[RMDB]
RNA sequence: GGGAACGACUCGAGUAGAGUCGAAAAGAUAUGGAACUAGAGCAACAGCCACCAUUCGGAAACGAAUGAGUGGACAUGCUCAUUCCUAAGUCAAACUAUCAAGAUUGCUUCGGCAAUCUUGAUAGAAGAGUGUUAGUUUCUUCGGAAACUAACACUCAAAAGAAACAACAACAACAAC
Reactivity to 2A3 in 0.01 (KOAc 150mM, MgCl2 10mM, bicine 150mM(pH8.5), 24C), signal-to-noise 3, nucleotides 027 to 126: g010a030u050a040u080g000g010a050a050c130u110a300g000a030g000c010a000a190c060a230g080c010c000a000c000c010a000u000u000c010g000g040a080a050a050c010g000a020a000u020g050a040g070u000g000g060a000c000a040u020g000c010u000c000a000u000u000c000c010u030a120a000g020u040c050a040a070a130c000u000a000u020c000a010a000g000a000u000u010g020c010u070u140c300g130g000c000a010a010u020c000u000u000g000a000u000a000g010a020a010
Reactivity to DMS in 0.01 (KOAc 150mM, MgCl2 10mM, bicine 150mM(pH8.5), 24C), signal-to-noise 2, nucleotides 027 to 126: g010a030u010a270u000g000g000a000a000c270u010a150g000a010g030c000a030a090c260a160g020c010c000a010c000c000a030u000u010c000g030g010a100a050a140c010g000a010a010u010g000a200g030u000g000g010a060c060a090u000g000c000u000c000a270u000u000c000c020u000a040a100g010u010c030a120a090a210c000u000a010u010c010a010a000g010a010u000u000g010c000u000u010c180g020g000c000a000a000u000c000u000u010g000a000u000a000g000a040a120